The data come from the RNA Mapping Database (RMDB), library M2PK50. Chemical mapping of a 177-nucleotide RNA with 2A3 and DMS. The RNA was probed in 150 mM KOAc, 10 mM MgCl2 and 150 mM bicine (pH 8.5) at 24 C. 2A3 adducts were read by reverse transcription with SuperScript II with manganese. Values cover nucleotides 27 to 126.
RNA sequence: GGGAACGACUCGAGUAGAGUCGAAAAGUCAGCUUGUUCGCAAGCUGACAAACUGGACACACCCACACCCAGGCGAAGCCGUGUCAAAAUGGGAGUGGGUAAAAAGGACACUGUUCGCAGUGUCCAACGAAAAAGGAAAGUUCGCUUUCCUUUUUCGAAAAGAAACAACAACAACAAC
Reactivity to 2A3 in 0.01 (KOAc 150mM, MgCl2 10mM, bicine 150mM(pH8.5), 24C), signal-to-noise 5, nucleotides 027 to 126: g000u000c000a010g010c000u020u010g030u070u140c180g000c120a000a000g010c000u010g000a000c000a000a000a000c010u040g150g050a010c010a010c010a010c130c000c000a000c000a010c000c000c000a010g030g000c050g100a090a040g100c100c070g140u150g100u130c070a210a150a040a100u060g000g010g000a020g000u010g000g000g010u010a000a010a000a000a000g000g000a000c000a000c000u010g020u080u070c210g000c110a000g000u000g000u000c000c000a000a010
Reactivity to DMS in 0.01 (KOAc 150mM, MgCl2 10mM, bicine 150mM(pH8.5), 24C), signal-to-noise 6, nucleotides 027 to 126: g010u000c000a000g020c000u000u010g020u010u010c190g030c000a010a000g010c000u000g010a000c000a010a030a080c060u000g020g000a100c120a110c160a040c000c000c000a010c010a080c000c000c010a040g010g020c190g000a070a110g020c110c130g000u000g010u000c100a060a040a170a150u000g010g010g010a080g030u000g000g000g010u000a000a000a040a070a020g000g010a010c000a000c000u000g000u000u000c180g010c000a010g010u000g000u000c000c000a020a040